[RMDB]
RNA sequence: GGGAACGACUCGAGUAGAGUCGAAAAUCUGUUGAGAUAUGUGAUCGUAAAGUCAAAGUGGGACUAUGGUCACAGCAACAGAAGUCAGAUUGCGACUAGUCCCACGGACUACUCUGAAUCAUGACCACUUCUCGUUUGUAUUCGUACAGACGAGAAGAAAAGAAACAACAACAACAAC
Reactivity to DMS in 0.01 (KOAc 150mM, MgCl2 10mM, bicine 150mM(pH8.5), 24C), signal-to-noise 9, nucleotides 027 to 126: u000c020u000g010u010u010g010a090g010a130u010a070u000g010u000g010a020u000c020g020u000a080a140a060g010u000c020a070a100a170g020u000g010g000g000a020c010u000a060u010g020g000u000c010a030c040a050g010c030a050a030c050a070g010a080a110g010u010c100a070g000a130u000u000g020c050g000a020c030u000a030g000u000c000c000c060a060c090g010g010a060c010u000a100c140u000c030u000g010a060a030u000c010a050u000g010a150c030c070a220
Reactivity to 2A3 in 0.01 (KOAc 150mM, MgCl2 10mM, bicine 150mM(pH8.5), 24C), signal-to-noise 9, nucleotides 027 to 126: u020c020u020g070u060u110g130a110g030a100u140a080u270g010u010g010a010u010c020g020u090a140a160a070g010u010c060a160a080a160g060u070g040g060g000a000c000u020a040u120g060g010u040c010a030c040a050g000c000a000a030c010a030g130a160a010g050u020c030a020g050a300u030u060g050c010g000a000c000u000a000g000u000c000c000c010a000c040g000g000a000c000u040a020c020u020c030u100g050a080a050u020c020a080u050g050a030c020c010a030
Conditions: 150 mM KOAc, 10 mM MgCl2 and 150 mM bicine (pH 8.5), 24 C. This 177-nucleotide RNA was probed chemically with DMS and 2A3. Values cover nucleotides 27 to 126. The DMS profile rests on 46,963 reads.